An RNA of 207 nucleotides, treated with DMS and read out base by base. The DMS profile rests on 3,866 reads. Conditions: 150 mM KOAc, 10 mM MgCl2 and 150 mM bicine (pH 8.5), 24 C. The data come from the RNA Mapping Database (RMDB), library M2RFPK. DMS adducts were read by reverse transcription with MarathonRT.
[RMDB]
RNA sequence: GGGAACGACUCGAGUAGAGUCGAAAACAGGUAGCCCAGACCUUCAAGGCUACGGUGCGUUGCGACGCACGGUCUGAUUCUUCACAACGACGUUCACCGCGUCUUCUUCCAUCCCCCUGGGUCAGUGUAUAACCAGCAGCCUUCGGGCUGCUGGUAACUUGUAAGAUUAGUUCGCUAAUCUUACAAGAAAAGAAACAACAACAACAAC
Reactivity to DMS in 0.01 (KOAc 150mM, MgCl2 10mM, bicine 150mM(pH8.5), 24C), signal-to-noise 2, nucleotides 027 to 156: c050a060g020g000u010a060g000c020c020c150a090g030a090c020c000u000u000c070a140a260g000g000c020u000a010c010g000g030u000g020c040g020u000u000g000c160g020a140c040g050c010a020c030g000g010u000c020u020g000a170u000u000c040u000u000c020a090c080a080a140c020g000a070c020g030u000u000c060a050c050c040g020c040g000u010c000u000u010c040u000u000c070c030a190u010c020c010c010c040c030u000g020g000g020u000c050a110g040u000g040u020a100u000a090a090c000c010a020g000c000a000g000c000c000u000u000c300g050g030g040c000u000g000c010u000g010g020u000a000a020